[RMDB]
RNA sequence: GGGAACGACUCGAGUAGAGUCGAAAAGAUCUGCGCCGAUCCGAAACGCUAGCAAACAGCCCGCAUCAUGUGGUCUCCUAACUUCGACGUGGUGAAAUACUGAGCUUAUGCGAGUAAGCCUGUUAGCAAUAGAUCAGAACGUUCGCGUUCUGAUCAAGGUGAUUAUCUGGUUCGCCAGAUAAUCACCAAAAGAAACAACAACAACAAC
Reactivity to DMS in 0.01 (KOAc 150mM, MgCl2 10mM, bicine 150mM(pH8.5), 24C), signal-to-noise 1, nucleotides 027 to 156: g010a040u020c010u020g010c000g050c060c000g020a100u000c060c000g010a050a100a080c060g020c020u000a060g020c070a050a060a180c070a160g010c020c000c020g060c120a040u010c050a070u000g050u010g000g020u000c050u000c060c010u000a110a110c060u000u000c010g020a060c020g060u010g020g000u000g000a100a030a100u020a110c080u010g020a050g000c010u000u000a080u000g030c190g000a210g020u000a020a060g020c000c020u000g000u000u010a110g040c060a110a070u010a070g010a030u010c000a010g000a000a010c000g000u000u040c300g060c040g070u010u000c000u010g010a000u000c000a000a030
Reactivity to 2A3 in 0.01 (KOAc 150mM, MgCl2 10mM, bicine 150mM(pH8.5), 24C), signal-to-noise 4, nucleotides 027 to 156: g000a040u010c000u070g010c050g000c020c020g040a070u010c040c010g100a100a020a020c050g010c030u020a010g030c030a080a010a100c030a030g050c000c010c020g060c020a050u050c020a040u060g030u070g030g070u000c030u040c060c020u060a100a140c040u090u080c070g080a060c020g050u060g030g010u050g050a050a050a030u130a060c040u040g010a020g010c010u040u030a020u090g050c060g010a010g080u040a040a000g000c000c020u040g010u070u060a030g030c020a060a150u040a190g000a000u010c000a000g000a010a000c000g000u060u040c160g010c020g120u000u000c010u000g000a000u000c000a000a000